[RMDB]
RNA sequence: GGGAACGACUCGAGUAGAGUCGAAAAGGGUGCGAAUAUAACUCUCGGAUAAUAACUAUACAUAGAAAUAAUAAAGCACCCGAAGCCUGAAUAUGUAUAGGAAUAAGGCGAACGAGAGGAAUAGAAAGGGAAAACUAAAGUUCGCUUUAGUUUUCCCAAAAGAAACAACAACAACAAC
Reactivity to 2A3 in 0.01 (KOAc 150mM, MgCl2 10mM, bicine 150mM(pH8.5), 24C), signal-to-noise 2, nucleotides 027 to 126: g000g030g000u000g030c000g200a300a070u110a090u040a170a070c000u000c000u000c000g000g030a070u070a290a060u090a120a110c000u000a000u000a000c000a000u010a040g060a010a160a000u090a110a040u160a080a270a000g000c000a000c000c000c000g000a030a000g160c000c000u000g090a040a000u030a000u020g000u010a000u000a000g000g030a110a070u110a110a050g080g080c070g020a000a000c000g000a010g040a000g010g080a000a070u130a010g150a000a120a080

Conditions: 150 mM KOAc, 10 mM MgCl2 and 150 mM bicine (pH 8.5), 24 C.
Structure probing data (2A3) for a 177-nucleotide construct.
Reactivities are given for positions 27 through 126.